[RMDB]
RNA sequence: GGGAACGACUCGAGUAGAGUCGAAAACUCCGAGGAACGGCCGAUGCUCGCCCUUCCGGCCGCCGCCACCCGCGAGGAGCGCGACCAGUUCGCCGCCGAACGCCUCGCCGCCCUCGGCGCCUACAUGCCCCCGGACAUCGAGGAGGCCCUCGCCGACCAUUCGAUACACAUUCGUGUGUAUCGAAUGAAAAGAAACAACAACAACAAC
Reactivity to 2A3 in 0.01 (KOAc 150mM, MgCl2 10mM, bicine 150mM(pH8.5), 24C), signal-to-noise 1, nucleotides 027 to 156: c060u010c030c010g050a120g040g020a100a100c050g030g000c030c020g030a050u090g020c070u090c060g050c040c040c040u060u070c050c010g000g000c010c000g000c010c020g020c000c030a100c010c000c010g050c020g000a030g000g010a050g030c050g000c010g000a030c030c070a030g010u110u040c020g010c060c030g050c050c030g120a070a020c020g000c000c120u040c010g010c010c060g000c000c010c000u010c000g010g020c030g070c000c010u220a260c100a130u210g020c070c020c000c020c050g020g000a010c030a110u080c050g000a070g020g000a040g010g090c000c030c000u050c030g020c030c010g010a040c000
Chemical mapping of a 207-nucleotide RNA with 2A3. The data come from the RNA Mapping Database (RMDB), library OK3TST. For 2A3 the reverse transcriptase was SuperScript II with manganese. Values cover nucleotides 27 to 156.